This 207-nucleotide RNA was probed chemically with DMS and 2A3. The RNA was probed in 150 mM KOAc, 10 mM MgCl2 and 150 mM bicine (pH 8.5) at 24 C.
RNA sequence: GGGAACGACUCGAGUAGAGUCGAAAAGAAAGAAAGAAAGAAACCGUCUCUGCUAGUCUCACGGUAACCACGUUGAAAUCGCAACGAAAGAAGCUCGCACUCACCUUCAACGGCUUAACGAGUGCAAAAAACUUACUGAUCUUCGGAUCAGUAAGAAGCUAGUAAUAUCCUUCGGGAUAUUACUAGCAAAAGAAACAACAACAACAAC
Reactivity to DMS in 0.01 (KOAc 150mM, MgCl2 10mM, bicine 150mM(pH8.5), 24C), signal-to-noise 2, nucleotides 027 to 156: g030a120a040a090g020a110a060a150g000a120a110a150g000a150a140a090c030c020g030u000c020u000c030u010g010c090u000a100g010u000c010u000c000a110c030g000g020u000a070a110c010c010a080c070g010u000u000g010a040a070a090u000c120g010c060a060a060c050g010a110a090a070g020a100a140g010c060u000c030g000c010a040c030u000c030a080c100c040u000u010c040a040a130c070g020g000c070u000u000a040a120c050g000a050g050u010g030c010a000a060a030a040a040a090c010u010u000a010c010u000g000a010u000c000u000u010c300g030g000a010u000c000a000g030u000a000a000g000a070a090
Reactivity to 2A3 in 0.01 (KOAc 150mM, MgCl2 10mM, bicine 150mM(pH8.5), 24C), signal-to-noise 3, nucleotides 027 to 156: g070a010a080a030g050a040a090a020g040a100a160a000g060a080a100a000c030c010g030u010c030u010c030u080g020c020u010a030g040u060c040u020c080a040c020g010g020u040a030a090c020c010a020c050g010u030u040g050a080a120a090u170c090g000c090a000a040c060g040a110a050a050g070a030a030g030c050u040c080g000c010a000c000u000c000a030c000c000u010u040c020a080a040c060g030g000c020u070u030a030a000c040g000a000g010u020g000c000a050a020a040a000a000a000c000u000u000a000c000u000g000a000u010c010u000u080c160g070g000a000u000c000a000g000u000a000a000g000a000a000
It was measured as part of the RMDB library M2RFPK.